[RMDB]
RNA sequence: GGGAACGACUCGAGUAGAGUCGAAAAGCGGUGAUGAAUUGGGACGCAGGCGCGGAGCCCAGGGACCACUCCCCCUGCACAGACAUGAGACCAUAGGGGACCUGUCUGGGUGGCCUCAGGGAUAGGCUAAGAGGAUUGUUUUCGAACAAUCCUCUUAAAAAGAAACAACAACAACAAC
Reactivity to DMS in 0.01 (KOAc 150mM, MgCl2 10mM, bicine 150mM(pH8.5), 24C), signal-to-noise 9, nucleotides 027 to 126: g010c080g010g010u010g010a080u020g010a100a120u020u020g010g000g000a080c070g010c040a070g000g020c120g020c060g020g010a130g000c030c030c020a060g000g000g000a090c070c020a100c040u010c020c020c010c010c020u000g010c040a100c030a030g000a040c020a020u030g010a090g020a250c020c020a160u030a140g010g010g000g010a180c070c010u000g000u000c010u000g000g000g020u000g000g000c030c010u000c060a080g000g000g010a070u020a040g000g010c080
Reactivity to 2A3 in 0.01 (KOAc 150mM, MgCl2 10mM, bicine 150mM(pH8.5), 24C), signal-to-noise 7, nucleotides 027 to 126: g060c050g030g030u080g060a130u070g020a070a160u120u050g020g010g010a010c030g020c050a030g040g080c040g020c020g060g010a030g020c010c000c010a030g010g000g010a040c010c010a030c030u030c020c000c000c000c000u030g010c060a040c010a040g050a000c010a040u230g030a100g030a130c030c010a080u190a100g070g010g000g020a020c000c000u040g020u010c020u010g000g000g070u040g020g020c000c020u020c030a040g060g010g020a070u080a070g030g000c010
Overview
This 177-nucleotide RNA was probed chemically with DMS and 2A3. For DMS the reverse transcriptase was MarathonRT. It was measured as part of the RMDB libraries RFM100 and RFMREP. The reactions ran in a buffer of 150 mM KOAc, 10 mM MgCl2 and 150 mM bicine (pH 8.5), at 24 C. Values cover nucleotides 27 to 126.